[RMDB]
RNA sequence: GGGAACGACUCGAGUAGAGUCGAAAAGUCUCGCCAGCCCUUAUACCCACAUGGCGCAACGUGGGCACCAGUAACUCCUAUGCUAUAAUACCUGCUCUUCGAGAUCCCAGUCUAACUAUGAUCAUCGCCCGACGGGGCGAGAUAGUCGUGGGUUCCCGCAUAUAAUUUUCUUCGGAAAAUUAUAUGCAAAAGAAACAACAACAACAAC
Reactivity to DMS in 0.01 (KOAc 150mM, MgCl2 10mM, bicine 150mM(pH8.5), 24C), signal-to-noise 2, nucleotides 027 to 156: g030u010c030u000c020g010c050c040a130g000c020c010c040u000u010a080u010a090c010c020c030a080c050a150u010g040g000c050g030c060a090a050c040g020u010g010g010g030c000a110c020c030a090g000u000a070a120c040u000c020c020u000a090u010g020c020u010a100u010a100a140u000a040c020c010u000g000c030u010c020u000u000c060g010a090g010a140u000c020c000c020a100g040u010c030u000a090a100c030u000a060u010g010a110u010c050a090u000c000g030c010c000c000g030a150c180g000g010g040g040c020g020a000g000a040u000a040g010u000c020g020u000g010g030g010u010u000c010c040c090
Reactivity to 2A3 in 0.01 (KOAc 150mM, MgCl2 10mM, bicine 150mM(pH8.5), 24C), signal-to-noise 4, nucleotides 027 to 156: g000u000c000u000c030g040c010c010a030g000c010c010c020u100u150a100u110a140c050c040c010a040c010a090u160g080g000c020g010c070a050a070c060g030u040g010g010g000c030a030c010c040a060g050u070a060a060c040u030c020c010u040a070u130g050c010u070a040u050a290a090u080a180c010c010u030g020c020u040c000u070u090c010g030a040g010a070u040c000c020c010a020g030u010c040u050a040a070c020u030a050u200g030a020u060c020a050u000c050g010c000c000c000g090a130c090g050g000g000g000c000g000a010g000a000u040a010g020u020c040g030u030g000g040g010u010u000c000c000c000
Structure probing data (DMS and 2A3) for a 207-nucleotide construct. The DMS profile rests on 2,907 reads. Values cover nucleotides 27 to 156. The RNA was probed in 150 mM KOAc, 10 mM MgCl2 and 150 mM bicine (pH 8.5) at 24 C.